An RNA of 177 nucleotides, treated with DMS and 2A3 and read out base by base. The reactions ran in a buffer of 150 mM KOAc, 10 mM MgCl2 and 150 mM bicine (pH 8.5), at 24 C. 2A3 adducts were read by reverse transcription with SuperScript II with manganese. The 2A3 profile rests on 46,091 reads.
RNA sequence: GGGAACGACUCGAGUAGAGUCGAAAAAGCGCGACGGCGUGGUUUAUCUGCCAUGCAUUAAGCCGGAGCCGCGUCGUACCGUGGGGCUGGUUUAUCGCCCGGGAUCGCCGCUGCGUAGCCGUUAUGACACUAAAUUAAUGUUCGCAUUAAUUUAGUGAAAAGAAACAACAACAACAAC
Reactivity to DMS in 0.01 (KOAc 150mM, MgCl2 10mM, bicine 150mM(pH8.5), 24C), signal-to-noise 9, nucleotides 027 to 126: a080g010c020g010c040g000a060c040g010g010c000g020u010g000g020u010u020u010a080u030c110u010g000c040c050a140u020g010c080a120u020u020a080a100g000c020c050g000g000a110g010c000c020g000c030g010u010c060g010u020a070c120c020g010u020g010g000g010g010c020u000g010g010u010u020u020a050u010c100g000c010c080c030g000g000g010a120u020c040g000c020c010g010c030u010g000c050g010u010a100g000c020c020g010u020u010a070u020g010a300
Reactivity to 2A3 in 0.01 (KOAc 150mM, MgCl2 10mM, bicine 150mM(pH8.5), 24C), signal-to-noise 9, nucleotides 027 to 126: a000g050c030g010c030g020a030c010g010g020c020g010u040g040g060u080u120u090a190u090c060u070g060c040c030a080u140g020c020a040u150u150a050a010g000c010c000g020g000a010g020c000c000g000c000g010u050c040g030u060a140c050c020g040u110g010g020g050g000c030u070g040g100u080u110u100a130u180c080g010c000c010c010g000g020g000a060u070c020g020c030c000g010c020u030g010c020g030u050a040g030c020c010g040u070u080a130u220g040a020